The record gives the reactivity of an RNA of 177 nucleotides to DMS and 2A3. It was measured as part of the RMDB library RFMREP. The reactions ran in a buffer of 150 mM KOAc, 10 mM MgCl2 and 150 mM bicine (pH 8.5), at 24 C. For 2A3, 872 sequencing reads were counted. DMS adducts were read by reverse transcription with MarathonRT. Values cover nucleotides 27 to 126.

RNA sequence: GGGAACGACUCGAGUAGAGUCGAAAAGAACGCACGUCGGUUGAAAACGGCGGCGAUGACCUGCGGGUAGGGGUGAAAGGCCUAUCAAACCCGGAGAUAUCUCGUUCUCCCCGAAAUAGCUUUAGGGCCAAUAACAAAGCUUCGGCUUUGUUAUUGGAAAAGAAACAACAACAACAAC
Reactivity to DMS in 0.01 (KOAc 150mM, MgCl2 10mM, bicine 150mM(pH8.5), 24C), signal-to-noise 1, nucleotides 027 to 126: g020a130a130c010g020c110a090c020g000u000c020g020g020u020u020g000a140a120a110a130c020g040g010c030g010g000c040g010a070u000g010a160c100c000u000g010c050g030g000g000u000a130g030g010g020g020u010g020a160a090a170g000g000c000c020u000a090u010c020a040a150a130c060c000c000g000g000a020g010a100u000a070u030c080u000c020g020u000u000c010u000c000c010c050c030g020a060a070a140u000a040g000c090u000u000u050a080g030g000g030
Reactivity to 2A3 in 0.01 (KOAc 150mM, MgCl2 10mM, bicine 150mM(pH8.5), 24C), signal-to-noise 1, nucleotides 027 to 126: g020a030a000c010g000c060a120c090g000u000c000g060g080u120u280g060a020a040a050a050c000g010g000c000g020g030c000g000a000u070g000a000c030c000u060g050c010g000g020g000u010a040g000g040g030g030u000g070a300a170a120g270g010c000c000u010a060u110c000a040a160a020c000c000c010g050g000a030g000a000u200a060u080c040u010c060g000u110u000c010u090c000c000c010c000g050a050a070a040u090a030g060c070u040u090u030a060g030g070g000